[RMDB]
RNA sequence: GGGAACGACUCGAGUAGAGUCGAAAAUCUUCCUCUAGUUUCUUGAUCUUCUUCUUGGCCUUCCGGAGAUCCUUCUCGAGAUCAUCCACUAACUUUCUUGCAUUGACCCACUGCUCGAGGACUCCUUUACCCGGCCGGUUCGCCGGCCGGAAAAGAAACAACAACAACAAC
Reactivity to 2A3 in 0.01 (KOAc 150mM, MgCl2 10mM, bicine 150mM(pH8.5), 24C), signal-to-noise 2, nucleotides 027 to 129: u010c010u030u100c000c000u000c020u000a000g060u000u070u000c000u020u010g030a060u050c060u000u000c020u060u000c010u020u110g070g010c000c000u010u030c020c020g000g000a050g050a070u020c000c000u060u100c010u000c030g170a160g000a120u020c020a020u000c030c060a000c100u080a200a010c000u030u100u130c000u040u060g030c030a040u010u050g040a020c000c040c000a030c070u010g000c000u000c000g000a000g010g020a020c020u040c000c000u000u000u030a060c030
Reactivity to DMS in 0.01 (KOAc 150mM, MgCl2 10mM, bicine 150mM(pH8.5), 24C), signal-to-noise 1, nucleotides 027 to 129: u040c020u000u000c000c100u030c120u000a050g000u060u000u060c040u000u030g020a100u000c000u000u010c000u050u000c000u000u020g030g030c000c000u040u010c030c080g000g060a140g090a000u010c030c100u080u000c000u040c080g000a140g040a010u090c050a300u000c080c000a050c090u000a120a100c080u010u050u080c000u000u040g070c290a130u020u000g000a050c000c030c050a080c010u000g070c040u000c000g000a000g000g020a180c110u000c010c020u000u050u030a060c160
Chemical mapping of a 170-nucleotide RNA with 2A3 and DMS. The reactions ran in a buffer of 150 mM KOAc, 10 mM MgCl2 and 150 mM bicine (pH 8.5), at 24 C. For DMS, 2,915 sequencing reads were counted.